An RNA of 177 nucleotides, treated with DMS and 2A3 and read out base by base. The reactions ran in a buffer of 150 mM KOAc, 10 mM MgCl2 and 150 mM bicine (pH 8.5), at 24 C. The DMS profile rests on 6,227 reads. For DMS the reverse transcriptase was MarathonRT. 2A3 adducts were read by reverse transcription with SuperScript II with manganese. Values cover nucleotides 27 to 126.
[RMDB]
RNA sequence: GGGAACGACUCGAGUAGAGUCGAAAAUUCAAACAUAGAUUCUUGUCCAACUGAAGCUUAAUUUUGGAUCUGAGCCCAAGUUAGAUGAGCCAAAAUCAAUUCCAAGGGAAUUAAUAUCUCAUGUUCGCUUGCUUAAAUGAUUCGUCAUUUAAGCAAGAAAAGAAACAACAACAACAAC
Reactivity to DMS in 0.01 (KOAc 150mM, MgCl2 10mM, bicine 150mM(pH8.5), 24C), signal-to-noise 6, nucleotides 027 to 126: u000u000c060a130a070a040c110a040u000a070g010a050u010u010c020u000u000g010u000c040c030a030a060c030u010g010a200a270g000c040u000u000a020a090u000u000u000u010g010g010a070u010c120u000g000a040g000c000c010c020a120a040g010u000u000a050g000a030u010g000a020g010c300c170a040a080a070a050u000c110a030a040u000u000c010c030a120a130g010g020g010a020a030u000u000a040a060u010a060u000c010u000c100a030u010g000u010u000c130g010
Reactivity to 2A3 in 0.01 (KOAc 150mM, MgCl2 10mM, bicine 150mM(pH8.5), 24C), signal-to-noise 5, nucleotides 027 to 126: u050u010c000a010a010a010c030a040u100a040g030a040u100u020c000u010u040g010u000c010c000a030a010c030u020g020a020a000g010c000u040u050a060a060u100u240u190u290g210g030a080u030c080u090g020a010g000c010c000c010a020a010g000u010u020a020g010a030u010g010a010g040c030c040a060a100a020a100u080c040a010a040u050u000c050c020a100a100g220g010g020a010a010u060u030a090a060u090a060u070c030u000c040a020u040g050u070u050c060g000
For 2A3, 6,857 sequencing reads were counted.